An RNA of 177 nucleotides, treated with DMS and 2A3 and read out base by base.
Source: RMDB libraries RFM100 and RFMREP, as collected in RNAgym.
The RNA was probed in 150 mM KOAc, 10 mM MgCl2 and 150 mM bicine (pH 8.5) at 24 C.
[RMDB]
RNA sequence: GGGAACGACUCGAGUAGAGUCGAAAAGUACCGUUCAUCGGUCAAGGGUAUACGGUAGCUGCGCUCCCCUGCUAGAACCUCCAAACAAGCUCAAGGUCCAUUUGUAGGAGAACGUAGGGUAGUCAAGUGUUAUAAAUCGGUUCGCCGAUUUAUAACAAAAAGAAACAACAACAACAAC
Reactivity to DMS in 0.01 (KOAc 150mM, MgCl2 10mM, bicine 150mM(pH8.5), 24C), signal-to-noise 9, nucleotides 027 to 126: g020u010a030c010c000g020u000u010c150a060u010c030g030g010u010c140a110a120g010g010g010u010a060u010a040c040g000g010u000a030g010c050u000g000c100g000c020u000c050c000c000c010u010g000c030u010a080g000a170a140c060c000u010c030c020a050a090a070c100a070a120g010c100u010c110a100a070g010g020u010c050c060a180u010u000u010g000u000a110g010g000a050g010a070a090c170g000u000a020g010g010g010u010a050g010u010c090a070a110g020
Reactivity to 2A3 in 0.01 (KOAc 150mM, MgCl2 10mM, bicine 150mM(pH8.5), 24C), signal-to-noise 9, nucleotides 027 to 126: g030u020a010c000c000g020u050u100c060a100u100c050g060g120u070c070a070a110g140g010g010u060a060u010a080c030g020g020u030a030g070c060u060g020c030g000c050u030c000c000c000c000u010g000c000u000a030g020a090a060c000c000u010c020c000a070a100a090c030a090a030g040c030u070c110a090a110g120g030u060c040c020a070u050u050u040g030u030a020g000g030a030g010a030a000c040g010u020a010g010g010g010u010a000g020u040c050a090a030g070